The record gives the reactivity of an RNA of 177 nucleotides to DMS.
Values cover nucleotides 27 to 126.
The data come from the RNA Mapping Database (RMDB), library OK2TST.

RNA sequence: GGGAACGACUCGAGUAGAGUCGAAAAGGAACCGAGUUGAAGUACAACGGCGAAGAGUACUUGCUGCUCAACGCUCGCGACGUUCUCGCCAUCAUCGAGAAGUAAGGCAGCCCCCGUAUGGCAAAGCUGUUACAGCCUACUUCGGUAGGCUGUAACAAAAAGAAACAACAACAACAAC
Reactivity to DMS in 0.01 (KOAc 150mM, MgCl2 10mM, bicine 150mM(pH8.5), 24C), signal-to-noise 2, nucleotides 027 to 126: g030g010a110a130c080c050g010a130g000u000u000g020a120a100g010u030a060c020a100a300c170g020g000c060g030a030a200g010a070g010u000a050c040u000u000g030c090u000g000c010u000c000a060a240c130g000c020u000c070g030c240g000a080c070g010u000u030c010u000c020g030c070c070a020u000c130a070u010c030g000a080g040a030a130g000u000a020a090g010g000c060a050g010c050c050c000c000c070g020u000a000u010g010g090c040a030a050a090g000c100
About this RNA: In probing experiments dimethyl sulfate is read out at A N1 and C N3, which are open when not base-paired. For DMS, 1,078 sequencing reads were counted.